The record gives the reactivity of an RNA of 177 nucleotides to 2A3 and DMS. Values are in units of 0.01, from 0 to 300, in steps of 10. The RNA was probed in 150 mM KOAc, 10 mM MgCl2 and 150 mM bicine (pH 8.5) at 24 C.

RNA sequence: GGGAACGACUCGAGUAGAGUCGAAAAGUUUUCGAUGCCGUGCAUCUUAAAUAGCCAUUCCAGUACGCCGUAGUCGAUGCCGUAUGCGCCGCCGAAUCCGGUACGCCAUUGCGUGGCGCAAUCGGUGAAUGGUUUGGGUUUUCGAACCCAAACCAUUAAAAGAAACAACAACAACAAC
Reactivity to 2A3 in 0.01 (KOAc 150mM, MgCl2 10mM, bicine 150mM(pH8.5), 24C), signal-to-noise 1, nucleotides 027 to 126: g000u010u060u070u110c060g020a030u060g050c130c300g090u130g000c010a000u000c000u080u120a130a090a140u150a040g000c030c040a040u000u000c000c000a010g000u000a080c000g050c050c070g120u050a040g000u180c050g060a080u200g010c030c030g010u030a080u070g060c060g000c000c010g040c040c030g080a040a010u090c110c010g020g000u000a050c090g080c030c020a090u060u120g070c130g000u010g040g020c000g100c000a010a080u010c000g060g000u010g010
Reactivity to DMS in 0.01 (KOAc 150mM, MgCl2 10mM, bicine 150mM(pH8.5), 24C), signal-to-noise 1, nucleotides 027 to 126: g030u000u000u000u000c070g000a050u010g020c010c170g070u000g000c020a020u000c040u000u000a030a020a030u010a070g000c020c040a140u000u000c020c060a040g030u000a080c070g000c030c010g010u000a100g000u020c070g000a090u010g000c000c030g000u000a160u000g020c070g000c020c010g010c020c010g010a030a110u000c110c000g000g010u000a080c170g010c010c080a100u000u020g020c180g030u000g000g040c000g000c030a050a080u000c020g010g000u000g010

Background: Values cover nucleotides 27 to 126. The data come from the RNA Mapping Database (RMDB), library OK2TRN.